RNA sequence: GGGAACGACUCGAGUAGAGUCGAAAAUUUCAGAUGUGAUCCGCAAGGUGCAACAUCGACCAGUCUGGAUCAUUUAUGUGAAGGUACUGAGUAAGAGCAAGUAUGUUAGGACCCGAAAGAUGGUGAAAAAACGACCAUAGUUCGCUAUGGUCGUUUUAAAAGAAACAACAACAACAAC
Reactivity to 2A3 in 0.01 (KOAc 150mM, MgCl2 10mM, bicine 150mM(pH8.5), 24C), signal-to-noise 2, nucleotides 027 to 126: u030u070u030c030a040g010a070u060g030u060g000a070u020c000c000g020c070a100a080g020g000u070g080c110a110a060c070a040u040c000g000a000c020c000a000g020u010c000u040g010g000a010u000c010a050u000u070u220a230u210g040u020g010a000a000g000g010u060a050c020u000g000a080g170u030a050a010g000a000g010c050a020a030g060u040a000u110g030u050u070a040g030g010a060c010c020c010g010a050a080a020g020a110u170g000g060u090g070a140a010
Reactivity to DMS in 0.01 (KOAc 150mM, MgCl2 10mM, bicine 150mM(pH8.5), 24C), signal-to-noise 5, nucleotides 027 to 126: u010u010u010c060a140g000a040u010g000u000g000a090u000c010c010g020c230a080a120g000g020u000g010c120a130a030c050a030u000c060g000a080c050c020a050g010u010c020u000g020g010a070u000c010a060u010u020u040a060u010g000u000g000a300a120g000g010u020a020c020u000g010a070g010u030a060a090g000a060g000c080a050a070g010u010a070u010g010u000u010a130g000g010a080c030c030c020g000a060a070a110g010a050u000g000g010u020g000a000a060
The record gives the reactivity of an RNA of 177 nucleotides to 2A3 and DMS. The RNA was probed in 150 mM KOAc, 10 mM MgCl2 and 150 mM bicine (pH 8.5) at 24 C. 2A3 adducts were read by reverse transcription with SuperScript II with manganese. The 2A3 profile rests on 1,053 reads.